[RMDB]
RNA sequence: GGGAACGACUCGAGUAGAGUCGAAAAGAUAUGGAACCACUACGACAUGAACGGGAUCGGAAACGAUCCCAGUUCAACAGCGUAAGUGGUUCCUAAGUCAAAACGAUUGGUGUUCGCACCAAUCGAACGAAGUGUUUUUCUUCGGAAAAACACUUCGAAAAGAAACAACAACAACAAC
Reactivity to DMS in 0.01 (KOAc 150mM, MgCl2 10mM, bicine 150mM(pH8.5), 24C), signal-to-noise 1, nucleotides 027 to 126: g020a030u050a120u000g000g000a010a000c000c000a000c000u010a000c030g030a140c140a170u010g000a010a010c000g000g000g000a010u000c010g020g000a040a020a100c000g000a000u000c010c000c000a000g000u000u000c000a040a170c300a160g060c000g010u000a050a110g030u000g010g010u000u000c000c000u000a010a040g000u000c020a090a110a090a210c050g000a020u000u000g000g020u000g040u000u020c250g030c000a020c000c000a010a000u000c010g010a080a100
This 177-nucleotide RNA was probed chemically with DMS. For DMS, 1,204 sequencing reads were counted. The RNA was probed in 150 mM KOAc, 10 mM MgCl2 and 150 mM bicine (pH 8.5) at 24 C. DMS adducts were read by reverse transcription with MarathonRT. Source: RMDB library TTRDES, as collected in RNAgym.